[RMDB]
RNA sequence: GGGAACGACUCGAGUAGAGUCGAAAACUCCAUGUCCUCAAGCCGCCUCGGAGGACGAAGGAGUGGCAGGGCCUCCAGGUCCGCUAUUCGACCACAUGCCUUUUGGAGAUGAUCAUGGCCGGGCCGGAGGUCUGGAGUCUUUCGAGACUCCAGACCUAAAAGAAACAACAACAACAAC
Reactivity to 2A3 in 0.01 (KOAc 150mM, MgCl2 10mM, bicine 150mM(pH8.5), 24C), signal-to-noise 2, nucleotides 027 to 126: c000u000c000c000a040u160g020u000c000c000u000c030a100a030g020c040c030g010c030c070u050c020g110g000a000g010g020a000c010g000a140a110g010g010a010g010u010g010g030c090a110g060g000g010c000c010u030c060c010a080g000g000u000c000c000g000c020u100a110u040u080c040g020a020c050c010a020c000a070u270g090c010c030u110u280u140u300g050g020a120g000a070u070g030a020u030c020a040u120g030g070c120c070g030g000g000c000c000g000g000
Reactivity to DMS in 0.01 (KOAc 150mM, MgCl2 10mM, bicine 150mM(pH8.5), 24C), signal-to-noise 2, nucleotides 027 to 126: c000u040c000c000a240u020g010u010c000c000u000c000a110a070g020c050c050g060c030c000u000c070g030g030a000g000g030a020c000g030a130a100g000g000a000g010u000g020g020c190a150g000g010g000c020c000u000c000c020a120g020g020u000c030c000g000c030u020a020u010u000c130g000a000c020c020a080c050a140u080g030c000c020u000u010u020u000g000g000a020g000a190u000g000a180u010c000a030u010g000g000c020c050g040g000g060c000c020g000g000
The record gives the reactivity of an RNA of 177 nucleotides to 2A3 and DMS. For DMS the reverse transcriptase was MarathonRT. The 2A3 profile rests on 1,016 reads. Conditions: 150 mM KOAc, 10 mM MgCl2 and 150 mM bicine (pH 8.5), 24 C. 2A3 adducts were read by reverse transcription with SuperScript II with manganese.